[RMDB]
RNA sequence: GGGAACGACUCGAGUAGAGUCGAAAACACUGCUGCCGCGAAGAGUUCGCCUCUGUCAGCCUUGAGGUGGCCGGGAUAGAAUAGGCGGGCUCGCGGCAGCGCGCGGGAAAGAGCAAAUGGUGAACUGGGUGCCUGUUGGGGUCGCGUCCCUGAAGAGCUCUAGCUAAGUGUUCGCACUUAGCUAGAGAAAAGAAACAACAACAACAAC
Reactivity to 2A3 in 0.01 (KOAc 150mM, MgCl2 10mM, bicine 150mM(pH8.5), 24C), signal-to-noise 2, nucleotides 027 to 156: c050a010c030u070g010c000u000g020c000c000g010c020g090a240a110g010a050g060u030u000c000g010c010c000u000c000u000g020u040c000a000g050c000c060u180u240g120a100g160g090u140g070g000c020c040g300g070g030a020u020a030g060a130a150u120a150g010g000c010g000g010g000c000u020c030g000c000g000g030c020a000g000c010g000c000g000c000g000g040g010a000a170a040g050a030g000c030a090a070a150u080g010g040u050g020a070a060c040u070g060g020g000u050g030c020c020u060g080u060u070g020g000g000g000u040c010g030c080g040u060c000c000c020u050g010a110a070g010a050g040